[RMDB]
RNA sequence: GGGAACGACUCGAGUAGAGUCGAAAAGAUAUGGACCAUUUCACAAGGGAGUCGGAGUAUCGGAAACGAUAUGACGACUUUGAUCUUGUGAGAAUGGUCCUAAGUCAAACAACCGUUCGCGGUUGAACAACUCAUAAUGCUUCGGCAUUAUGAGUUGAAAAGAAACAACAACAACAAC
Reactivity to 2A3 in 0.01 (KOAc 150mM, MgCl2 10mM, bicine 150mM(pH8.5), 24C), signal-to-noise 1, nucleotides 027 to 126: g030a030u080a070u220g000g010a010c000c000a010u040u000u000c010a000c010a010a030g010g000g010a010g010u000c030g000g020a040g000u020a010u000c000g030g020a100a050a020c010g000a000u000a000u060g040a030c000g000a000c000u010u050u010g000a010u010c000u000u000g000u010g010a050g110a010a020u010g010g000u000c000c000u010a010a010g000u000c000a010a030a170c000a010a010c060c010g030u020u070c300g020c050g110g000u000u030g010a090a080
Reactivity to DMS in 0.01 (KOAc 150mM, MgCl2 10mM, bicine 150mM(pH8.5), 24C), signal-to-noise 5, nucleotides 027 to 126: g010a060u000a300u010g000g000a000c000c000a020u000u000u010c000a000c010a010a010g000g010g000a010g030u000c010g000g000a300g000u000a000u000c000g010g000a150a080a270c000g020a010u010a010u000g000a300c010g010a010c000u000u000u010g000a080u010c000u000u010g000u000g000a040g010a010a020u000g010g020u000c000c000u000a010a080g000u000c030a160a120a270c010a010a020c020c000g010u000u000c230g030c020g000g010u000u000g010a170a250
Structure probing data (2A3 and DMS) for a 177-nucleotide construct. DMS adducts were read by reverse transcription with MarathonRT. The DMS profile rests on 4,467 reads. 2A3 adducts were read by reverse transcription with SuperScript II with manganese. It was measured as part of the RMDB library TTRDES.